[RMDB]
RNA sequence: GGGAACGACUCGAGUAGAGUCGAAAAGCACGUUGGUUCAGAUGAUGGGCCCGCAUCUGUACGAAAGUGAGACGAAAGUCCAGCCAACGUGCAUGAGCACGCGGGCCCCGUGCUCAACAGCAAAAGACAUAUUUACUGAGUUCGCUCAGUAAAUAUGAAAAGAAACAACAACAACAAC
Reactivity to DMS in 0.01 (KOAc 150mM, MgCl2 10mM, bicine 150mM(pH8.5), 24C), signal-to-noise 5, nucleotides 027 to 126: g020c000a010c010g000u000u000g000g010u000u010c010a000g000a010u010g000a040u050g000g010g000c000c000c000g010c000a010u000c010u000g030u010a030c020g000a090a110a110g000u010g000a070g000a010c010g000a120a090a130g000u010c000c010a020g000c000c000a000a010c000g000u000g010c000a020u010g000a040g000c000a010c020g010c180g000g000g000c000c010c000c010g000u000g000c000u000c020a130a090c150a160g000c250a080a080a100a090g000a230
Reactivity to 2A3 in 0.01 (KOAc 150mM, MgCl2 10mM, bicine 150mM(pH8.5), 24C), signal-to-noise 9, nucleotides 027 to 126: g000c000a000c000g000u000u010g020g000u120u120c040a020g010a050u050g010a030u060g030g000g000c010c000c000g000c000a010u000c010u040g100u150a080c110g130a100a060a040g090u090g040a200g000a050c000g050a140a030a010g000u000c000c000a000g000c000c000a000a000c000g000u000g000c000a000u010g000a000g000c000a000c000g000c070g000g000g000c000c000c000c000g000u000g000c000u000c010a070a130c060a040g240c060a060a100a030a010g100a030